Overview:
Chemical mapping of a 207-nucleotide RNA with DMS and 2A3. The RNA was probed in 150 mM KOAc, 10 mM MgCl2 and 150 mM bicine (pH 8.5) at 24 C.
RNA sequence: GGGAACGACUCGAGUAGAGUCGAAAACUGCUGAGGAUGAUCCACCACUGAUCAUCACAGCAUUAUCACGCUGAAUCAUUCGUGAAGCCGAUUGUCGAGCCGUAUCAGCGUCUGUUGCGGUAUCACCGUCGACGUAAUCGAUUGUGAAGUCAAGAACAGAAAUUCAAAGAUUCGUCUUUGAAUUUCUAAAAGAAACAACAACAACAAC
Reactivity to DMS in 0.01 (KOAc 150mM, MgCl2 10mM, bicine 150mM(pH8.5), 24C), signal-to-noise 4, nucleotides 027 to 156: c140u000g010c010u020g020a150g010g010a020u000g010a000u010c010c060a300c130c230a120c100u000g010a010u000c010a030u000c020a180c030a030g020c030a060u000u000a080u000c050a090c060g050c050u020g000a160a180u000c070a080u000u000c030g040u000g000a160a170g000c050c000g010a090u000u010g020u000c030g000a300g030c010c000g030u000a090u000c030a020g030c140g030u000c050u000g030u000u000g000c010g020g000u000a080u000c000a020c000c040g020u000c000g000a020c030g020u000a110a220u010c000g010a030u000u000g020u000g010a090a090g000u010c070a080a150g020a110a130c200
Reactivity to 2A3 in 0.01 (KOAc 150mM, MgCl2 10mM, bicine 150mM(pH8.5), 24C), signal-to-noise 7, nucleotides 027 to 156: c030u020g010c000u010g030a140g150g000a030u000g000a000u030c020c040a080c070c020a110c300u160g000a000u000c000a000u000c000a000c010a010g000c010a000u050u120a080u050c060a010c060g020c020u020g040a120a030u070c000a030u050u060c020g010u010g060a050a040g040c010c000g030a020u000u060g040u050c090g010a020g000c000c000g000u030a030u060c020a030g080c080g280u050c090u040g040u040u020g000c000g000g040u060a300u190c010a000c010c020g010u010c000g010a020c010g020u050a030a050u070c020g000a030u050u000g000u030g040a030a030g040u060c100a080a030g110a070a020c050